[RMDB]
RNA sequence: GGGAACGACUCGAGUAGAGUCGAAAAGUGUAAAUAGAGGAGUCAGGGGUCGCACCCGAUCCGCGAACCUAGGGUAACACUGACUGUGGAGCGAAAGAGAUAGCGAGAGAGAACUCGCUAUCAGCAAAUCAUGCAGUACCUUCGGGUACUGCAUGAUAAAAGAAACAACAACAACAAC
Reactivity to DMS in 0.01 (KOAc 150mM, MgCl2 10mM, bicine 150mM(pH8.5), 24C), signal-to-noise 4, nucleotides 027 to 126: g010u010g000u020a080a070a100u020a040g010a070g000g020a090g020u000c070a080g010g000g030g050u000c090g030c220a170c170c090c010g000a050u030c040c050g000c080g000a050a050c050c060u000a080g010g010g010u000a120a050c060a040c030u010g010a100c030u000g010u020g000g000a170g000c050g000a070a120a090g010a170g000a020u000a000g010c000g010a010g010a150g020a210g050a100a140c000u000c000g010c010u000a000u010c000a090g010c090a070a080
Reactivity to 2A3 in 0.01 (KOAc 150mM, MgCl2 10mM, bicine 150mM(pH8.5), 24C), signal-to-noise 2, nucleotides 027 to 126: g090u090g030u100a050a120a120u180a120g070a100g100g050a030g030u050c060a020g000g000g010g030u110c050g000c050a080c000c030c030g020a040u060c040c030g020c020g030a040a040c000c040u020a040g060g000g040u020a010a000c020a020c020u040g060a030c000u060g020u020g070g030a090g050c090g070a030a080a060g180a000g000a000u000a000g000c000g000a000g000a000g000a000g030a110a030c010u000c000g000c000u000a010u000c000a000g020c030a020a120